[RMDB]
RNA sequence: GGGAACGACUCGAGUAGAGUCGAAAAGAAACUAAAGGUUUGACUUUAGAAGAAGUUAACACCUUAUGGGAAGAAGGUGUUUUGCCAUGGAAAUCACCUUCUUGGGUUCCACCAAACAAGAGAGGUAAGGCUGGAAAAUAUUCGUAUUUUCCAGCCUAAAAGAAACAACAACAACAAC
Reactivity to DMS in 0.01 (KOAc 150mM, MgCl2 10mM, bicine 150mM(pH8.5), 24C), signal-to-noise 1, nucleotides 027 to 126: g000a060a090a150c040u000a050a020a020g000g000u010u020u000g020a040c000u000u000u000a130g010a150a230g000a040a040g000u000u010a010a000c090a000c000c010u000u000a100u000g010g010g000a070a090g020a000a010g010g000u000g010u000u000u040u010g020c060c130a130u010g010g010a010a060a000u010c010a010c010c000u000u000c020u000u030g030g020g000u010u030c000c040a150c100c060a070a020a180c140a040a060g010a090g020a090g020g020u000a110